[RMDB]
This 177-nucleotide RNA was probed chemically with DMS and 2A3.
Source: RMDB library OK2TST, as collected in RNAgym.
Conditions: 150 mM KOAc, 10 mM MgCl2 and 150 mM bicine (pH 8.5), 24 C.
For DMS, 49,821 sequencing reads were counted.
DMS adducts were read by reverse transcription with MarathonRT.

RNA sequence: GGGAACGACUCGAGUAGAGUCGAAAAGGGAACGCCAAACCAAGGGCUACGGGCGCCUUACAGAGAUAACUAUUGACAUCGGGGCCUGCAACGGACACAAGGGCCCAUUGUUUGGGCUUAGUUAUAAGCGGGGUGGGCGGUUCGCUGCUCGCCUUGCAAAAGAAACAACAACAACAAC
Reactivity to DMS in 0.01 (KOAc 150mM, MgCl2 10mM, bicine 150mM(pH8.5), 24C), signal-to-noise 9, nucleotides 027 to 126: g010g010g010a090a170c080g000c020c030a060a090a130c090c090a100a110g010g000g010c030u000a080c100g010g010g010c060g010c030c020u000u000a100c130a080g000a130g010a070u000a050a070c070u000a080u010u010g010a090c090a050u010c080g000g000g000g010c020c020u000g000c110a050a070c100g010g010a080c090a060c110a090a140g010g000g010c000c000c000a030u000u010g010u000u000u000g010g010g010c020u000u000a050g010u000u010a070u010a070a170
Reactivity to 2A3 in 0.01 (KOAc 150mM, MgCl2 10mM, bicine 150mM(pH8.5), 24C), signal-to-noise 9, nucleotides 027 to 126: g040g010g020a090a050c050g020c030c020a080a000a040c030c030a050a080g040g010g010c020u060a030c060g030g030g000c040g080c020c000u050u050a060c050a030g120a000g020a100u060a140a080c070u080a100u200u150g050a020c020a040u060c050g020g000g020g010c000c010u010g000c020a070a070c040g060g060a020c030a000c030a170a130g030g010g000c010c010c020a020u040u110g080u050u060u020g010g000g000c000u020u030a030g010u080u080a130u030a250a050